Source information
Structure probing data (DMS and 2A3) for a 177-nucleotide construct.
[RMDB]
RNA sequence: GGGAACGACUCGAGUAGAGUCGAAAAAAGGAGAUCAAAAUGACAGUUCAGGAACUUGCUCCUUAUGAGCUUGAUGUACGUCCGCUCCUGAAAAGCGGUGUCGAGCCUUUUCAGGCCAUUAUGGGGAGCUAAUUAGCAGUUUCGACUGCUAAUUAGCAAAAGAAACAACAACAACAAC
Reactivity to DMS in 0.01 (KOAc 150mM, MgCl2 10mM, bicine 150mM(pH8.5), 24C), signal-to-noise 3, nucleotides 027 to 126: a070a050g010g020a050g010a080u020c090a040a050a090a070u010g020a090c060a080g010u010u000c060a080g010g000a070a070c090u000u000g000c010u000c000c050u000u010a020u000g000a100g010c010u000u000g000a040u000g010u000a050c100g000u010c010c030g000c010u000c010c030u020g000a080a020a140a010g000c040g000g010u000g000u000c050g000a140g030c070c130u000u000u000u010c040a040g000g010c030c050a020u000u010a060u000g000g000g000g000a200
Reactivity to 2A3 in 0.01 (KOAc 150mM, MgCl2 10mM, bicine 150mM(pH8.5), 24C), signal-to-noise 3, nucleotides 027 to 126: a000a020g100g010a090g000a100u160c110a060a060a060a140u170g030a040c020a070g050u050u060c050a020g100g000a060a040c020u010u100g000c000u030c010c000u050u040a090u100g040a020g010c010u020u010g020a010u040g090u120a040c010g030u010c000c000g000c010u000c000c010u030g030a020a040a020a010g010c020g010g020u040g050u120c040g060a070g030c000c010u070u080u060u060c040a020g010g010c030c000a060u160u160a100u140g010g000g030g000a020

Notes:
Source: RMDB library OK2TRN, as collected in RNAgym. The 2A3 profile rests on 3,385 reads. Reactivities are given for positions 27 through 126. The RNA was probed in 150 mM KOAc, 10 mM MgCl2 and 150 mM bicine (pH 8.5) at 24 C. For DMS, 4,343 sequencing reads were counted.